RNA sequence: GGGAACGACUCGAGUAGAGUCGAAAAGUAAGGUUCGCCUUACCGCCUUCCUAAGUCCAGGUGUGAGCUGUUGUCAGUCCUGGGUCGGAAACGACCCUGUACGGACUUGGAUUUACAGCUCUGCCUGGAUAUGGAGUAACUUGAGCUUCGGCUCAAAUAUCUAGCCGAAGUUCGCUUCGGCUAGAUAAAAAGAAACAACAACAACAAC
Reactivity to 2A3 in 0.01 (KOAc 150mM, MgCl2 10mM, bicine 150mM(pH8.5), 24C), signal-to-noise 3, nucleotides 027 to 156: g020u000a010a000g070g000u050u180c290g110c050c000u020u010a010c020c020g110c030c010u030u030c000c000u040a170a080g010u010c020c000a000g020g010u110g050u050g230a000g000c000u000g000u030u020g020u020c000a000g000u030c010c010u040g000g000g000u000c000g010g040a070a090a000c010g000a000c010c010c010u020g150u140a060c130g000g020a020c000u060u140g080g000a030u290u200u050a000c010a000g000c000u000c000u000g000c000c000u000g000g030a000u000a000u020g000g010a030g030u150a100a090c100u010u090g030a020g000c020u040u110c300g120g000c000u000c020a000a010a030
Reactivity to DMS in 0.01 (KOAc 150mM, MgCl2 10mM, bicine 150mM(pH8.5), 24C), signal-to-noise 1, nucleotides 027 to 156: g030u000a020a000g010g030u000u020c300g010c000c010u000u000a010c010c030g040c070c020u000u000c000c030u000a110a250g020u000c010c020a020g000g000u000g020u000g010a040g060c000u000g060u000u000g000u000c020a060g030u000c010c020u000g040g070g000u030c010g000g000a210a150a290c020g040a020c000c020c000u010g040u010a080c210g070g050a010c010u010u010g030g010a060u000u000u000a080c030a060g020c030u000c000u010g000c000c000u000g000g000a000u000a010u000g030g020a160g000u010a080a080c170u000u010g010a050g000c010u000u020c250g030g000c010u000c020a000a020a230